[RMDB]
RNA sequence: GGGAACGACUCGAGUAGAGUCGAAAAGUACGUUACACCGGCACGCAUCUACAUGCUGGUGGCUCUGAUGGGCGGCUACAUUGGAUCAGCCAUCAUCUACAUCUUGGCCGUCCCAGCCGUCAACCGCCUGCCUACUGGCUUUCGAGCCAGUAGGCAGAAAAGAAACAACAACAACAAC
Reactivity to DMS in 0.01 (KOAc 150mM, MgCl2 10mM, bicine 150mM(pH8.5), 24C), signal-to-noise 2, nucleotides 027 to 126: g010u030a080c120g000u030u020a150c000a020c020c010g000g030c000a030c040g000c090a220u020c130u000a110c060a030u000g000c000u000g010g010u000g000g000c090u000c030u000g040a100u000g020g020g010c010g000g000c000u000a030c300a190u000u000g000g010a090u000c050a080g010c040c030a010u000c130a000u000c130u000a110c180a060u000c060u000u000g020g010c000c090g010u000c010c000c170a120g000c120c020g000u000c060a020a060c000c020g000c160
Reactivity to 2A3 in 0.01 (KOAc 150mM, MgCl2 10mM, bicine 150mM(pH8.5), 24C), signal-to-noise 1, nucleotides 027 to 126: g010u040a030c100g030u030u050a030c020a000c020c000g000g040c020a010c050g040c050a160u030c080u270a110c010a050u000g000c010u030g000g000u000g010g020c030u110c050u140g130a100u110g010g020g020c000g010g000c020u050a010c030a190u050u210g030g000a020u090c020a010g070c030c000a010u050c020a020u000c050u070a080c050a110u060c050u120u100g010g000c000c020g000u000c020c000c010a000g010c000c010g010u010c030a060a020c000c060g030c080